[RMDB]
RNA sequence: GGGAACGACUCGAGUAGAGUCGAAAAGAUAUGGAGUAGACCCAGCCUAAGGAGCGACGAUCUCGGAAACGAGGGAGCUCCGAAGGCUGCUACUCCUAAGUCAAACACCCUUCUUCGGAAGGGUGAACAAACUUCGUUAGUUCGCUAACGAAGUUUGAAAAGAAACAACAACAACAAC
Reactivity to 2A3 in 0.01 (KOAc 150mM, MgCl2 10mM, bicine 150mM(pH8.5), 24C), signal-to-noise 2, nucleotides 027 to 126: g020a000u090a040u150g000g000a010g010u030a050g020a130c050c150c010a000g020c010c000u020a060a040g000g020a000g000c000g290a300c010g010a050u010c010u000c010g070g010a140a080a060c010g000a020g000g010g010a010g000c000u060c020c000g000a000a000g000g010c000u010g000c010u000a000c000u010c000c000u030a100a010g040u020c040a040a140a010c010a030c010c010c000u010u010c010u020u040c260g110g000a000a000g010g000g000u000g000a000a000
Reactivity to DMS in 0.01 (KOAc 150mM, MgCl2 10mM, bicine 150mM(pH8.5), 24C), signal-to-noise 3, nucleotides 027 to 126: g010a030u000a300u000g000g000a040g020u000a010g000a160c200c270c080a010g000c010c000u010a060a300g000g000a010g020c010g000a060c280g000a020u010c000u000c000g010g000a140a090a210c010g000a010g000g000g000a040g030c000u000c000c010g010a100a040g000g000c020u000g000c010u000a000c000u010c010c000u000a010a060g000u010c050a160a140a210c010a000c000c000c000u010u000c000u000u000c210g010g000a020a000g010g000g000u000g000a030a060